The record gives the reactivity of an RNA of 207 nucleotides to 2A3. For 2A3 the reverse transcriptase was SuperScript II with manganese. High 2A3 reactivity points to a flexible backbone, as in loops and unpaired stretches. Conditions: 150 mM KOAc, 10 mM MgCl2 and 150 mM bicine (pH 8.5), 24 C. The data come from the RNA Mapping Database (RMDB), library RNAMAK.
RNA sequence: GGGAACGACUCGAGUAGAGUCGAAAAAUAGCUAUGUUCGCAUAGCUAUAAAACCUCCUAAGUCAAAGCUAAUGCGAGCUGGAGUCGGAAACGACGUUGAAAGCUCGAACUACAUUGCUUUGAUAUGGAUCACUAAGAGGUAGUUCGCUACCUCUAAGUACUCUGCACGGUUCGCCGUGCAGAGUACAAAAGAAACAACAACAACAAC
Reactivity to 2A3 in 0.01 (KOAc 150mM, MgCl2 10mM, bicine 150mM(pH8.5), 24C), signal-to-noise 1, nucleotides 027 to 156: a000u000a000g000c000u010a010u040g000u020u020c220g020c140a020u000a000g000c000u000a000u010a000a000a000a050c000c020u030c030c010u060a020a090g000u000c000a000a000a000g000c000u300a070a000u020g000c000g000a010g000c000u010g020g020a020g010u000c000g070g000a060a120a160c050g010a020c030g100u230u020g060a020a000a000g000c020u000c000g000a000a010c030u110a030c030a020u010u010g010c000u020u000u000g000a000u000a020u010g010g010a040u140c070a080c270u150a130a030g000a000g040g010u000a000g010u000u130c300g000c060u010a000c000c000u000c010u020a020a000